[RMDB]
RNA sequence: GGGAACGACUCGAGUAGAGUCGAAAAUUUCUCCUAUUCGUAGGAGAAAGAAGGACCACCCGGGAGGGUAAAGGCCAUACGGACAGCCGGGUCCACUGCCGAUAAGGGCUGAGUUCGCUCAGCCCAACCUUACCCUGCAGUUCGCUGCAGGGUAAGGAAAAGAAACAACAACAACAAC
Reactivity to DMS in 0.01 (KOAc 150mM, MgCl2 10mM, bicine 150mM(pH8.5), 24C), signal-to-noise 1, nucleotides 027 to 126: u000u000u000c000u010c000c000u010a020u000u020c210g010u000a010g000g010a020g010a010a000a030g020a170a070g000g000a020c030c000a110c000c010c000g010g020g000a150g020g000g020u010a020a100a020g010g010c040c000a090u000a060c000g000g010a010c010a140g000c050c010g010g010g050u000c010c010a090c140u000g000c000c010g000a300u030a070a170g000g020g000c020u000g000a000g000u000u010c270g010c010u000c000a000g050c010c040c000a000a010
Reactivity to 2A3 in 0.01 (KOAc 150mM, MgCl2 10mM, bicine 150mM(pH8.5), 24C), signal-to-noise 1, nucleotides 027 to 126: u010u000u000c030u020c000c000u000a000u050u040c190g120u030a000g000g000a010g040a010a000a010g030a070a040g020g020a020c000c000a010c000c010c030g080g080g030a090g060g050g000u120a190a070a100g030g000c020c000a050u060a090c000g000g000a000c000a000g010c000c010g040g000g000u000c030c000a010c000u020g000c020c000g030a010u130a120a300g010g000g000c010u000g000a000g010u090u110c270g040c130u000c020a020g000c000c000c000a000a000